Chemical mapping of a 207-nucleotide RNA with 2A3. Values are in units of 0.01, from 0 to 300, in steps of 10. Values cover nucleotides 27 to 156. The data come from the RNA Mapping Database (RMDB), library ARCHII.
RNA sequence: GGGAACGACUCGAGUAGAGUCGAAAAGCAUGCAGAGCUGCGGUUCGCUCUUAAAACUGGUCGCAGAUUCAUAAUUGCCAACGACAGCAAUUACGCUCUCGCUGCUUAAGCAGUGAGCCCUCUGCCCGGAUUUGUCUGUGGAUCCGGAGCCGAAAGGACUGAGUACAAGCUUCGGCUUGUACUCAGUAAAAGAAACAACAACAACAAC
Reactivity to 2A3 in 0.01 (KOAc 150mM, MgCl2 10mM, bicine 150mM(pH8.5), 24C), signal-to-noise 1, nucleotides 027 to 156: g060c080a050u260g010c050a020g010a010g020c000u020g010c010g000g020u090u190c050g010c040u010c000u130u160a030a040a050a080c050u100g020g010u040c020g000c020a010g000a130u200u140c080a030u070a080a020u010u060g000c040c040a140a060c110g120a100c090a030g030c000a000a020u050u000a040c080g000c030u030c020u010c030g000c000u010g010c000u170u130a150a050g000c000a000g000u000g000a010g010c000c000c000u000c040u050g000c000c000c000g000g010a020u040u010u090g200u030c120u100g050u070g020g000a000u010c010c000g010g030a060g000c030c010g090a040a050a020g100g020
The RNA was probed in 150 mM KOAc, 10 mM MgCl2 and 150 mM bicine (pH 8.5) at 24 C.